[RMDB]
RNA sequence: GGGAACGACUCGAGUAGAGUCGAAAACGAUCUGUUCGCAGAUCGAGCUACGGAGACGUAGCAAAGCGAGCGAGGGCACGGGCGCUCGCACUACCGGAAAUAAAACCAUAUCCACGUGUGCUAGGAUAUGGCCGUGCCCAAAGAAACAGCACACGAAGAUCAUAUACCGCUUCGGCGGUAUAUGAUCAAAAGAAACAACAACAACAAC
Reactivity to 2A3 in 0.01 (KOAc 150mM, MgCl2 10mM, bicine 150mM(pH8.5), 24C), signal-to-noise 1, nucleotides 027 to 156: c010g010a000u000c000u020g040u140u160c270g010c080a000g010a000u000c000g000a020g010c000u000a000c000g040g000a060g010a130c000g000u000a000g000c030a040a110a010g010c000g000a000g000c000g000a040g000g000g010c000a000c010g030g040g000c010g000c000u000c000g020c040a000c020u070a030c000c030g130g110a030a050a130u260a000a030a070a050c000c000a000u000a020u000c000c020a040c070g010u020g000u000g000c020u040a050g000g000a000u000a000u000g000g010c010c000g020u010g040c000c000c000a040a080a050g040a020a050a000c060a010g000c000a000c010a000c010g010a120a020